[RMDB]
RNA sequence: GGGAACGACUCGAGUAGAGUCGAAAAUCCUAAGAGAUAGGAUAAUUCCGUUUGAAAGCUGGGCUGUUUGAGGCGUGGGGUUCGUCCUUGCGUUUUGUAUGCAGCCUCGUGUAUCGAAAGGGAAUCAUUGUAGCGUAGCAUUCGUGCUACGCUACAAAAAAGAAACAACAACAACAAC
Reactivity to DMS in 0.01 (KOAc 150mM, MgCl2 10mM, bicine 150mM(pH8.5), 24C), signal-to-noise 3, nucleotides 027 to 126: u020c000c000u000a040a120g000a140g020a210u010a060g010g000a040u020a160a080u000u000c000c000g020u000u010u000g010a030a040a300g000c010u000g010g000g030c010u010g000u000u000u020g000a010g000g000c000g010u000g000g000g000g010u030u030c230g000u030c000c000u000u000g000c000g000u010u000u000u000g010u010a040u010g020c000a010g010c000c000u000c300g010u000g010u000a270u000c020g010a010a040a050g000g010g000a020a020u000c080a160
Reactivity to 2A3 in 0.01 (KOAc 150mM, MgCl2 10mM, bicine 150mM(pH8.5), 24C), signal-to-noise 3, nucleotides 027 to 126: u000c000c000u010a060a040g110a000g030a100u050a030g070g010a010u050a070a090u130u000c020c020g010u050u000u000g030a050a020a020g000c000u000g000g000g020c000u000g050u070u020u190g030a000g000g000c020g020u020g000g010g010g050u050u080c210g050u270c030c000u030u010g000c000g000u010u010u010u010g130u040a300u130g010c000a000g000c000c000u000c000g010u010g000u070a020u030c020g010a020a000a000g130g000g020a000a040u080c070a080
Chemical mapping of a 177-nucleotide RNA with DMS and 2A3. In probing experiments dimethyl sulfate is read out at A N1 and C N3, which are open when not base-paired. For 2A3 the reverse transcriptase was SuperScript II with manganese. The data come from the RNA Mapping Database (RMDB), libraries RFM100 and RFMREP. The reactions ran in a buffer of 150 mM KOAc, 10 mM MgCl2 and 150 mM bicine (pH 8.5), at 24 C.